[RMDB]
The record gives the reactivity of an RNA of 207 nucleotides to 2A3. It was measured as part of the RMDB library RSTRND.
RNA sequence: GGGAACGACUCGAGUAGAGUCGAAAAGUACGGUGAUAACGCUAGAGGAUUGGGCAAUCCGCAGCCAAGCCCCUACGUUCCGCAGGGAAUACGGGGAAGGUUCAGAGACUAAAUGGGUGUGGGUUGGGUCCUCCGGGGGAGGACACCAGCUUAAGAUUACCUUUUGGUACUUCGGUACCAAAAGGUAAAAAGAAACAACAACAACAAC
Reactivity to 2A3 in 0.01 (KOAc 150mM, MgCl2 10mM, bicine 150mM(pH8.5), 24C), signal-to-noise 1, nucleotides 027 to 156: g070u040a060c090g050g020u030g050a160u130a300a000c050g010c000u020a080g010a010g020g030a050u000u100g060g040g000c020a050a070u050c030c100g020c090a020g050c010c050a000a100g020c000c000c000c000u030a030c200g040u020u010c020c020g180c120a080g240g000g000a020a020u020a050c070g020g000g000g000a030a010g020g040u030u120c070a020g020a010g010a260c010u050a040a130a040u000g030g010g030u030g000u100g060g010g020u000u020g030g010g000u000c010c000u030c000c000g100g000g000g030g000a000g000g030a000c050a100c030c010a000g010c000u090u030a060a050g020a150u050